RNA sequence: GGGAACGACUCGAGUAGAGUCGAAAACUGUUCUGUUGCAAGGAUCUUUCUAUUCUGACAUCAGCACAAGACCUUUUUUUUUUUUUUUGAGAUGGAGUCUCGCUCUGUCACCCAGGCUGGAGUGCCAUGGUGCAAUCUUGGCUCACUGCACCCUCUGCACAUCAUAUCGAUUCGUCGAUAUGAUGUGAAAAGAAACAACAACAACAAC
Reactivity to DMS in 0.01 (KOAc 150mM, MgCl2 10mM, bicine 150mM(pH8.5), 24C), signal-to-noise 1, nucleotides 027 to 156: c060u000g010u000u000c030u000g010u000u000g000c040a100a300g030g020a050u000c020u000u000u000c050u000a130u000u000c020u000g000a110c050a110u010c040a060g010c050a090c060a050a060g020a070c020c000u000u000u000u000u000u000u000u000u000u010u000u000u070u040u000g000a100g020a040u010g010g010a110g020u010c020u000c070g030c040u010c010u010g000u000c030a120c020c010c020a100g000g000c030u010g000g030a110g020u000g000c040c030a070u010g030g040u010g020c050a030a050u000c080u000u010g020g000c050u000c030a010c030u010g010c030a040c030c010c010u000c010u000g000
Reactivity to 2A3 in 0.01 (KOAc 150mM, MgCl2 10mM, bicine 150mM(pH8.5), 24C), signal-to-noise 3, nucleotides 027 to 156: c030u020g030u060u010c020u020g010u020u030g030c070a070a060g040g000a050u020c050u050u240u010c050u180a110u070u020c030u050g080a120c000a030u040c030a030g010c050a020c010a080a060g040a100c010c020u050u030u030u000u000u000u000u000u000u000u000u090u120u140u060g030a080g000a010u080g090g010a030g030u020c010u020c070g010c000u030c010u030g090u100c020a030c030c010c020a010g030g000c010u030g060g070a060g040u060g040c020c000a040u040g030g000u030g010c010a040a070u050c060u020u050g020g020c010u020c030a030c020u030g010c020a040c000c020c010u020c010u040g010